[RMDB]
RNA sequence: GGGAACGACUCGAGUAGAGUCGAAAAGAAAAAAAGAAAGCGGUUGGGUGGGUCCAUCGACCGUCGUGGCGUAUUCGGACGCUUUACCACGACGCGAGGAAAUAGCGAGACCGACCACCCCCUUUAACAGAGGUAUAGUAGUUCGCUACUAUACCAAUCAAUACUCACUGUUCGCAGUGAGUAUUGAAAAAGAAACAACAACAACAAC
Reactivity to DMS in 0.01 (KOAc 150mM, MgCl2 10mM, bicine 150mM(pH8.5), 24C), signal-to-noise 1, nucleotides 027 to 156: g000a010a000a100a100a100a030a260g000a150a100a130g000c190g040g010u000u000g010g000g060u000g020g010g040u000c060c010a110u010c050g050a090c220c000g000u010c020g020u000g000g000c010g040u000a140u000u040c040g010g000a240c060g030c060u000u010u000a060c020c000a040c010g040a020c020g000c010g010a110g010g000a020a040a060u010a070g070c020g000a150g030a060c020c020g070a120c000c000a030c000c000c000c010c000u000u000u000a080a160c120a160g000a160g030g020u010a020u000a010g000u010a010g020u000u020c240g060c000u000a030c010u000a000u000a000c010c010a050a010
Reactivity to 2A3 in 0.01 (KOAc 150mM, MgCl2 10mM, bicine 150mM(pH8.5), 24C), signal-to-noise 2, nucleotides 027 to 156: g030a020a040a000a000a000a000a000g060a020a090a020g110c160g040g080u200u160g140g030g010u030g050g040g000u020c000c010a090u160c020g000a020c060c000g000u000c000g010u010g020g000c030g020u080a130u060u130c050g110g060a020c020g010c010u090u080u150a030c000c010a000c000g000a000c000g000c030g020a020g030g010a040a140a020u040a050g030c010g000a070g070a080c000c020g030a010c020c020a020c010c000c000c000c010u000u050u080a120a030c060a050g110a060g110g000u000a060u000a000g010u000a000g000u010u080c220g010c140u000a000c000u000a000u000a000c000c010a010a000